Record summary
An RNA of 207 nucleotides, treated with 2A3 and read out base by base. Source: RMDB library VIROID, as collected in RNAgym. Conditions: 150 mM KOAc, 10 mM MgCl2 and 150 mM bicine (pH 8.5), 24 C. For 2A3, 992 sequencing reads were counted.
[RMDB]
RNA sequence: GGGAACGACUCGAGUAGAGUCGAAAAGAAACGCGGGCCUGUCUCCUAAGAUGCCUCCGCUAGUCGAGCGGACUUGGCCUCUUCCGCCCGAGGACCUUUUCUUUCUGAUCUUGCUUGUUCCAACGAGCCCCGCGAGUGGAAUCCCCGGAACCCCUGCCACUGAUAAUGUCUUCGGACAUUAUCAGUGAAAAGAAACAACAACAACAAC
Reactivity to 2A3 in 0.01 (KOAc 150mM, MgCl2 10mM, bicine 150mM(pH8.5), 24C), signal-to-noise 2, nucleotides 027 to 156: g020a020a150a000c060g000c030g010g000g020c030c110u120g100u110c080u000c050c030u050a010a030g030a020u020g000c010c020u010c000c000g000c020u080a110g200u250c220g060a020g000c000g000g030a030c060u030u110g020g000c000c010u020c000u030u000c060c030g060c000c010c000g000a050g020g050a070c020c000u050u040u080u080c050u060u110u020c040u110g070a130u000c030u030u140g020c010u040u070g020u120u070c030c010a070a080c030g030a020g000c010c000c040c040g090c020g020a030g030u050g060g100a050a120u030c000c000c000c050g000g010a050a060c010c000c000c000u000g010c010